This 207-nucleotide RNA was probed chemically with 2A3 and DMS. DMS adducts were read by reverse transcription with MarathonRT. For DMS, 2,219 sequencing reads were counted.
RNA sequence: GGGAACGACUCGAGUAGAGUCGAAAAGACAGCCCUUCUCCCUGAACAUGGCCUGUGGUCGCCAAAUACACAGUCAUGGUUGCGGUGUUGCAUUGUGCUGCUGGGGAACUUGUCAAGCAAAGGCACUUUAUUUGCCUUCCCUAGAUAUUCAGAUUCAUCGAUAAUAGCCGUUCGCGGCUAUUAUCGAAAAAGAAACAACAACAACAAC
Reactivity to 2A3 in 0.01 (KOAc 150mM, MgCl2 10mM, bicine 150mM(pH8.5), 24C), signal-to-noise 2, nucleotides 027 to 156: g000a010c030a060g120c010c000c000u010u000c040u020c030c000c000u020g020a080a020c010a030u040g030g000c000c110u040g030u020g020g030u070c100g060c140c040a000a040a000u240a000c020a000c010a030g020u040c010a010u020g010g000u050u060g050c090g030g060u020g020u020u010g000c090a140u050u080g040u080g030c050u000g000c000u000g010g010g010g020a010a060c060u220u100g080u080c060a070a020g010c060a110a100a000g000g070c010a020c000u150u210u210a120u130u210u050g000c020c000u010u020c000c000c010u020a060g060a120u110a070u110u210c060a000g050a100u160u210c010a050
Reactivity to DMS in 0.01 (KOAc 150mM, MgCl2 10mM, bicine 150mM(pH8.5), 24C), signal-to-noise 1, nucleotides 027 to 156: g030a280c040a100g010c000c030c050u000u020c060u000c010c030c030u000g000a070a070c050a060u010g030g000c090c080u000g030u000g000g030u000c090g000c090c140a030a110a240u000a030c020a020c060a060g000u010c020a050u030g000g000u000u000g010c060g000g040u000g030u000u000g030c000a300u000u000g030u000g000c000u010g030c000u000g000g010g050g000a060a060c060u010u010g010u000c060a030a090g010c070a040a020a090g030g000c020a020c240u000u000u000a160u010u030u000g000c010c010u000u000c000c050c030u000a080g010a110u000a120u000u030c030a100g010a170u000u000c060a230